[RMDB]
RNA sequence: GGGAACGACUCGAGUAGAGUCGAAAAGCAGACGUAAGUUCAGUUUUUAUACAUUGUUUAUAAUAGAACUUUCACCUGGAGUAAGUGCUAUACUUGCUAACAGUAAGCUGAGACUGCGCGGUCGACGCGUUGAUAAGCGAUUCGUCGCUUAUCAACGAAAAGAAACAACAACAACAAC
Reactivity to DMS in 0.01 (KOAc 150mM, MgCl2 10mM, bicine 150mM(pH8.5), 24C), signal-to-noise 7, nucleotides 027 to 126: g000c040a080g010a140c120g010u010a030a030g010u000u000c000a140g010u020u030u010u020u010a030u000a030c080a140u030u030g000u050u040u000a020u000a030a030u000a120g000a010a010c010u000u000u010c020a160c170c020u010g000g010a020g000u000a010a000g010u000g020c260u060a100u030a020c000u000u010g020c010u000a030a120c040a020g000u010a070a080g000c040u000g000a120g010a090c020u020g000c030g000c040g010g010u000c060g020a100c140g010
Reactivity to 2A3 in 0.01 (KOAc 150mM, MgCl2 10mM, bicine 150mM(pH8.5), 24C), signal-to-noise 9, nucleotides 027 to 126: g020c010a010g040a140c040g040u060a030a030g000u020u000c020a020g010u040u010u020u100u120a100u030a050c110a190u130u190g040u060u210u020a110u050a090a070u060a060g030a020a010c000u030u080u070c100a100c050c020u010g020g010a000g000u010a020a000g000u040g100c110u140a090u140a300c000u010u000g020c000u050a170a100c000a020g040u070a040a010g010c010u010g010a010g020a070c020u030g020c040g000c020g040g030u070c020g010a050c050g000
Chemical mapping of a 177-nucleotide RNA with DMS and 2A3. For 2A3, 8,549 sequencing reads were counted. Conditions: 150 mM KOAc, 10 mM MgCl2 and 150 mM bicine (pH 8.5), 24 C. Values are in units of 0.01, from 0 to 300, in steps of 10.